[RMDB]
RNA sequence: GGGAACGACUCGAGUAGAGUCGAAAACUAGGUAUGCUUCGGCAUACCUAGAAAAACCGUAGGCUCCUAUCAGGGAGUCGAAUGGUUCGAAAGAGCCAUACGACGAGGAUCUGACGGAGCCUAAACGGAAAAACCUUGACCCUUCGGGGUCAAGGAAUCAAAUCGUUUAGUUCGCUAAACGAUUUGAAAAAGAAACAACAACAACAAC
Reactivity to DMS in 0.01 (KOAc 150mM, MgCl2 10mM, bicine 150mM(pH8.5), 24C), signal-to-noise 1, nucleotides 027 to 156: c020u000a000g010g020u000a020u000g000c000u010u010c300g080g000c010a020u000a000c010c010u020a030g010a040a010a100a120a080c020c020g030u000a030g020g040c000u000c000c010u000a100u000c010a060g000g000g000a130g050u000c010g000a070a070u000g020g040u000u000c040g000a150a210a270g020a010g010c030c000a010u000a030c030g000a030c020g000a160g050g020a060u000c000u020g020a090c260g000g000a070g000c030c000u000a040a010a050c010g000g000a080a110a070a070a150c000c000u000u010g030a010c000c000c000u000u010c300g050g000g030g010u010c000a000a010g010g000a050a030
Reactivity to 2A3 in 0.01 (KOAc 150mM, MgCl2 10mM, bicine 150mM(pH8.5), 24C), signal-to-noise 1, nucleotides 027 to 156: c000u000a000g000g000u000a000u000g000c000u020u130c250g030g000c010a000u000a000c010c000u010a000g000a000a000a000a000a000c000c010g020u010a010g000g010c000u010c000c000u090a160u170c010a000g000g010g000a000g000u000c000g000a000a000u000g000g000u000u000c000g070a160a090a090g010a010g020c010c000a010u030a060c010g000a000c020g000a160g020g000a010u010c000u000g000a020c030g040g000a000g030c010c000u000a000a000a000c000g020g030a130a060a010a000a000c000c000u000u000g000a000c000c010c060u060u080c300g060g010g000g000u000c000a000a000g000g000a000a010